[RMDB]
RNA sequence: GGGAACGACUCGAGUAGAGUCGAAAAGAUAUGGAGAUUUCCGUUAGAACGAUGAAAUCGGAAACGAUGGAGUUCGACGGAGAAUCUCCUAAGUCAAAAGCGACGAUCACUUCGGUGAUCGUCGCAACAUUAUCUAAUGGUUCGCCAUUAGAUAAUGAAAAGAAACAACAACAACAAC
Reactivity to DMS in 0.01 (KOAc 150mM, MgCl2 10mM, bicine 150mM(pH8.5), 24C), signal-to-noise 4, nucleotides 027 to 126: g000a040u000a300u010g000g000a020g010a020u000u000u000c000c000g010u000u000a120g040a010a010c000g000a110u010g000a050a110a000u000c010g010g010a130a100a190c000g000a010u000g000g000a070g020u000u000c000g000a000c000g010g000a030g010a010a010u000c000u000c000c010u000a010a070g010u000c030a090a070a150a140g020c000g000a020c000g010a010u000c000a010c000u000u010c210g020g020u000g000a000u000c000g010u000c000g010c010a010a060
Reactivity to 2A3 in 0.01 (KOAc 150mM, MgCl2 10mM, bicine 150mM(pH8.5), 24C), signal-to-noise 4, nucleotides 027 to 126: g010a020u100a040u190g010g000a020g010a000u020u010u030c010c000g000u030u050a270g010a020a000c020g140a300u090g020a020a020a020u000c000g000g040a050a060a020c010g010a010u010g030g020a030g000u000u000c020g000a000c010g010g010a080g060a010a010u010c000u010c000c000u000a080a040g070u030c020a040a030a080a100g000c000g020a010c030g010a000u000c010a000c040u070u150c300g100g010u020g000a010u010c010g000u000c000g000c010a000a000
An RNA of 177 nucleotides, treated with DMS and 2A3 and read out base by base. For 2A3, 10,008 sequencing reads were counted. The DMS profile rests on 7,445 reads. The reactions ran in a buffer of 150 mM KOAc, 10 mM MgCl2 and 150 mM bicine (pH 8.5), at 24 C. DMS adducts were read by reverse transcription with MarathonRT.